Record summary: An RNA of 177 nucleotides, treated with 2A3 and DMS and read out base by base. For 2A3, 1,169 sequencing reads were counted. For 2A3 the reverse transcriptase was SuperScript II with manganese. For DMS the reverse transcriptase was MarathonRT. The data come from the RNA Mapping Database (RMDB), library OK1LIB.

[RMDB]
RNA sequence: GGGAACGACUCGAGUAGAGUCGAAAAAUUUCUAAGUAGUCUCUUAAAGUCUGGAAACGCUACUAUAUUAUAUGAAAAACAAAACUCAACAAAAGGCAGACCUGAAAGGGUAUACAAAUUAUUUAUAAUCGUAAUGACUAUUCGUAGUCAUUACGAUAAAAGAAACAACAACAACAAC
Reactivity to 2A3 in 0.01 (KOAc 150mM, MgCl2 10mM, bicine 150mM(pH8.5), 24C), signal-to-noise 2, nucleotides 027 to 126: a000u040u050u020c030u020a100a000g030u030a060g160u000c010u000c000u090u070a160a070a020g050u000c030u110g070g010a110a180a100c080g010c030u010a030c060u000a020u020a070u280u120a200u060a080u270g100a190a030a000a000a000c080a000a140a000a030c090u120c090a020a200c030a060a180a000a050g080g090c020a010g030a040c000c010u060g000a030a060a000g090g000g000u110a070u020a090c060a010a070a030u100u040a110u040u280u010a120u090a090
Reactivity to DMS in 0.01 (KOAc 150mM, MgCl2 10mM, bicine 150mM(pH8.5), 24C), signal-to-noise 1, nucleotides 027 to 126: a110u020u030u000c000u010a050a150g020u000a010g010u000c020u020c010u040u000a060a090a100g000u040c050u000g010g000a150a030a080c130g020c050u000a010c030u000a110u060a050u000u050a110u000a100u000g000a040a090a100a040a160c160a040a090a090a000c080u030c050a090a090c150a050a090a060a060g010g010c050a020g020a110c010c040u010g000a100a050a120g000g000g000u000a020u000a150c050a040a040a150u050u000a040u020u030u000a090u040a040